[RMDB]
RNA sequence: GGGAACGACUCGAGUAGAGUCGAAAAACUGCGCCACUAGCUACGGCUAGUGGCACAGAGGGAAACUCCCAGGCCCCGCUGUAGAGGGACCGUCAGCGGCCGGGCCAGAAAGAAUGAGGUCCCCAAAAGAAGUGGAUACUCUUCGGAGUAUCCACAACGAUGUAGAAAGGUUCGCCUUUCUACAUCGAAAAGAAACAACAACAACAAC
Reactivity to 2A3 in 0.01 (KOAc 150mM, MgCl2 10mM, bicine 150mM(pH8.5), 24C), signal-to-noise 2, nucleotides 027 to 156: a000c000u000g000c000g000c000c000a000c000u000a000g010c000u020a040c280g120g000c020u000a010g000u010g010g020c000a000c000a000g000a000g020g040g050a050a040a020c070u030c000c000c000a000g010g000c010c000c010c020g020c000u030g000u030a090g050a160g130g000g000a020c000c040g010u010c000a000g000c010g090g000c110c210g060g000g000c020c010a020g160a050a100a040g110a000a140u240g060a100g030g000u010c000c000c000c000a090a160a010a000g110a150a010g000u000g000g000a000u000a000c000u010c000u030u120c250g020g000a010g000u000a000u010c000c000a000c000a000a000